RNA sequence: GGGAACGACUCGAGUAGAGUCGAAAAGAAUGUUUUUGGAGCCGUCUCCUAUUUUACCUCGUCCUUACGGCUUUAUACACCAGCUAUUUCGAUAUGUAUGCUGGACGACAACGAGGUUACAAUUAGAGGGUAGGCUUUAGUUCGCUGAAGCCUACCCAAAAGAAACAACAACAACAAC
Reactivity to 2A3 in 0.01 (KOAc 150mM, MgCl2 10mM, bicine 150mM(pH8.5), 24C), signal-to-noise 3, nucleotides 027 to 126: g110a020a080u270g140u120u060u060u090u200g150g000a020g000c000c030g040u040c000u040c060c000u040a180u000u210u080u050a040c000c000u000c000g030u040c080c010u010u080a000c000g000g040c000u030u090u070a220u010a000c030a090c010c000a000g000c000u030a070u040u190u080c020g060a140u010a030u300g100u030a010u120g010c000u050g000g050a080c060g010a000c020a030a000c030g000a000g050g000u000u000a020c040a050a160u100u070a020g010a030
Reactivity to DMS in 0.01 (KOAc 150mM, MgCl2 10mM, bicine 150mM(pH8.5), 24C), signal-to-noise 3, nucleotides 027 to 126: g000a080a060u030g000u000u010u000u000u010g000g000a010g020c000c060g020u010c100u000c010c010u000a040u010u030u040u010a040c010c010u000c000g000u010c100c120u050u020a120c090g000g000c110u030u010u010a040u050a090c300a070c000c000a030g010c050u000a090u010u020u040c270g010a140u030a050u020g030u010a080u040g000c030u000g010g000a110c180g000a130c180a070a010c010g000a020g000g000u010u000a030c190a040a060u030u030a090g040a300